An RNA of 207 nucleotides, treated with 2A3 and read out base by base. The RNA was probed in 150 mM KOAc, 10 mM MgCl2 and 150 mM bicine (pH 8.5) at 24 C.
[RMDB]
RNA sequence: GGGAACGACUCGAGUAGAGUCGAAAAACAUUUCUGCCCCAGCGGUUCUGGGUGAUCUUGGCUCUGUCUGGGUUCUCCUUCAUAGCGCGCUGUCCGUUCUCGCUCGCCACAUCCAUCUCGAUAAUGUGGUCCUUCUGAAUCAUGAUAGUGCCAUGCACCGUACCAUGAACUUCGGUUCAUGGUACGGAAAAGAAACAACAACAACAAC
Reactivity to 2A3 in 0.01 (KOAc 150mM, MgCl2 10mM, bicine 150mM(pH8.5), 24C), signal-to-noise 2, nucleotides 027 to 156: a000c020a030u150u170u050c030u100g000c030c020c000c000a010g010c030g150g110u060u200c030u040g040g030g060u130g070a040u030c050u020u040g030g000c000u010c010u040g000u070c010u040g030g050g000u060u080c030u010c020c050u060u120c050a100u070a090g000c020g000c010g050c100u030g070u020c010c080g020u080u010c040u010c040g040c000u010c010g000c020c000a000c000a040u040c100c010a130u040c080u020c110g100a090u090a240a030u080g000u010g000g080u030c040c010u140u100c080u080g050a070a040u050c050a060u120g020a040u030a040g010u010g000c010c000a020u040g040c040a020

It was measured as part of the RMDB library OK3TST. 2A3 adducts were read by reverse transcription with SuperScript II with manganese. For 2A3, 986 sequencing reads were counted.